[RMDB]
RNA sequence: GGGAACGACUCGAGUAGAGUCGAAAAGAUAUGGAUCGCCAUCCAGUGAUGACCUAUCUCGGAAACGAGAUAGCAAGCUGGUGGGCGAUCCUAAGUCAAAAGAUCAUGAAACUUCGGUUUCAUGAUCGCUGACUUCACUCUUCGGAGUGAAGUCAGCAAAAGAAACAACAACAACAAC
Reactivity to DMS in 0.01 (KOAc 150mM, MgCl2 10mM, bicine 150mM(pH8.5), 24C), signal-to-noise 1, nucleotides 027 to 126: g000a130u000a300u020g000g010a000u000c000g020c000c010a270u000c020c000a000g020u000g000a070u010g030a080c300c020u000a020u000c000u000c000g000g000a060a070a190c000g010a030g000a000u000a000g000c020a040a110g000c000u000g000g030u000g030g000g000c000g010a010u000c000c000u030a000a090g030u000c030a080a090a090a100g010a020u000c000a000u010g000a020a000a010c000u000u000c300g040g000u000u000u000c000a010u000g000a000u010c000
Reactivity to 2A3 in 0.01 (KOAc 150mM, MgCl2 10mM, bicine 150mM(pH8.5), 24C), signal-to-noise 1, nucleotides 027 to 126: g050a010u110a050u120g000g000a000u000c000g000c030c030a000u000c010c010a030g030u020g090a300u170g000a020c010c030u010a010u030c000u010c000g080g000a090a120a050c000g000a000g000a020u000a000g030c000a030a150g000c010u030g040g030u250g220g000g000c000g000a000u000c000c000u000a000a010g020u000c010a080a170a190a000g000a010u030c000a010u000g000a010a010a010c050u100u140c300g180g000u030u000u000c010a020u000g000a010u010c010
The record gives the reactivity of an RNA of 177 nucleotides to DMS and 2A3. The reactions ran in a buffer of 150 mM KOAc, 10 mM MgCl2 and 150 mM bicine (pH 8.5), at 24 C. The 2A3 profile rests on 2,436 reads.